[RMDB]
RNA sequence: GGGAACGACUCGAGUAGAGUCGAAAAGGGGUCUUAAGCACUUCGAGGGCAAGACAUGCUCUGAAGCCUCCACGGAGCAACAGCUUGCCUACCCACCGAAGGCUUAAGACGGAGGCACCCAAAUCUCCAUGCUCAAGUUCGCUUGAGCAUGGAGAAAUCUUAUGCCACAGUUCGCUGUGGCAUAAGAAAAAGAAACAACAACAACAAC
Reactivity to 2A3 in 0.01 (KOAc 150mM, MgCl2 10mM, bicine 150mM(pH8.5), 24C), signal-to-noise 3, nucleotides 027 to 156: g040g000g000g000u020c000u010u010a010a000g010c040a090c300u020u010c030g020a070g000g010g020c010a000a000g030a060c090a170u260g000c000u000c000u020g030a100a020g010c000c000u000c020c000a050c020g000g000a010g000c040a080a060c070a140g060c000u000u010g000c020c010u010a060c020c060c020a070c040c010g000a000a000g010g000c000u000u000a000a000g000a000c030g000g000a000g000g000c000a020c000c000c000a040a130a050u060c000u000c000c000a000u000g000c000u010c000a030a000g000u070u110c110g150c140u000u000g000a000g000c000a000u000g000g000a000g000a000a000a000
Reactivity to DMS in 0.01 (KOAc 150mM, MgCl2 10mM, bicine 150mM(pH8.5), 24C), signal-to-noise 1, nucleotides 027 to 156: g040g000g010g060u000c020u000u000a010a040g010c030a090c000u000u010c030g000a300g010g000g000c020a020a020g030a020c010a300u000g020c010u050c000u000g000a010a210g050c020c030u000c020c040a300c020g010g000a000g060c000a080a090c110a110g050c030u000u000g040c010c000u000a020c060c000c040a300c030c010g030a050a030g030g000c000u010u000a050a010g000a070c000g000g020a000g050g070c040a070c000c020c020a030a140a180u000c000u000c000c040a000u000g010c000u020c000a020a010g030u010u000c300g010c040u010u010g010a030g000c000a000u010g020g000a000g000a000a030a030